[RMDB]
RNA sequence: GGGAACGACUCGAGUAGAGUCGAAAACCGGACCUUCAGCAGCCACUCCAACAUGAGUAGGCCUGGUGCCUGCGUCAGUUCCUCGAGCUUCUCCCAAGUGGGCAGCAGCAGCAGUGUCCAGGGUGUCCUGGGUGCCAGCAUGGGUCUGGGUGGAGGCUCAAUUACCUAACUUCGGUUAGGUAAUUGAAAAAGAAACAACAACAACAAC
Reactivity to DMS in 0.01 (KOAc 150mM, MgCl2 10mM, bicine 150mM(pH8.5), 24C), signal-to-noise 1, nucleotides 027 to 156: c020c020g050g040a040c010c020u010u020c100a150g020c060a120g080c010c020a040c010u010c010c080a130a170c120a170u010g020a300g000u000a050g050g000c030c020u000g000g050u010g020c000c000u000g020c050g010u000c060a100g010u000u000c000c000u000c050g000a090g040c040u000u000c040u000c000c000c100a100a120g040u000g000g020g020c040a070g010c010a090g030c090a150g050c040a110g040u000g000u010c000c000a030g020g030g020u000g010u000c000c000u000g000g000g060u000g020c000c030a110g000c030a250u000g010g000g000u000c020u000g010g000g030u000g000g010a050g020g050c080
Reactivity to 2A3 in 0.01 (KOAc 150mM, MgCl2 10mM, bicine 150mM(pH8.5), 24C), signal-to-noise 2, nucleotides 027 to 156: c010c000g020g020a020c030c030u120u110c110a050g000c020a020g000c050c000a020c000u040c030c080a180a110c050a270u300g000a040g030u160a230g010g040c010c000u020g020g060u030g000c000c000u030g000c000g070u080c020a060g010u030u050c020c010u090c040g030a020g030c040u110u030c000u040c020c010c000a070a040g060u090g010g000g000c000a060g000c000a000g020c010a010g020c000a010g060u020g030u000c020c020a010g070g020g060u290g060u180c010c010u000g020g030g000u020g060c000c030a020g000c010a050u070g020g000g030u000c010u030g010g000g020u040g000g000a010g000g040c000